[RMDB]
RNA sequence: GGGAACGACUCGAGUAGAGUCGAAAAUCGGACUGGUUCGCCAGUCCGAAAAUAACGGUCCGUGCUUCCAGCUGAUUGUAAAUGCUAACUGGCCUUACAUCAAAAGCCCGGACUUCGGUCCGGGCAACAUCUCAUCUAUGUUCGCAUAGAUGAGAUGAAAAGAAACAACAACAACAAC
Reactivity to DMS in 0.01 (KOAc 150mM, MgCl2 10mM, bicine 150mM(pH8.5), 24C), signal-to-noise 3, nucleotides 027 to 126: u000c000g000g010a010c000u000g000g000u000u020c220g010c000c020a020g010u010c000c000g010a000a010a070a110u000a080a130c110g000g010u000c040c020g000u010g000c040u000u000c050c020a070g020c080u000g000a070u010u000g010u000a020a030a100u000g000c040u010a090a080c140u000g000g010c010c090u000u000a040c050a040u010c070a060a110a200a170g000c000c000c000g010g000a020c000u000u010c110g000g010u000c000c000g000g000g000c010a000a020
Reactivity to 2A3 in 0.01 (KOAc 150mM, MgCl2 10mM, bicine 150mM(pH8.5), 24C), signal-to-noise 3, nucleotides 027 to 126: u000c000g000g000a000c010u000g000g060u050u030c140g040c070c000a000g000u000c000c000g000a000a000a000a010u030a050a040c040g000g020u030c030c010g010u030g030c010u110u030c030c010a010g040c040u040g010a160u190u040g110u100a040a140a040u090g010c000u040a110a180c050u100g020g000c020c000u060u050a050c040a070u130c080a030a060a140a070g000c010c000c010g000g020a010c040u010u000c130g070g010u000c020c020g000g000g000c010a010a000

The record gives the reactivity of an RNA of 177 nucleotides to DMS and 2A3. The reactions ran in a buffer of 150 mM KOAc, 10 mM MgCl2 and 150 mM bicine (pH 8.5), at 24 C. For 2A3 the reverse transcriptase was SuperScript II with manganese. The 2A3 profile rests on 3,525 reads.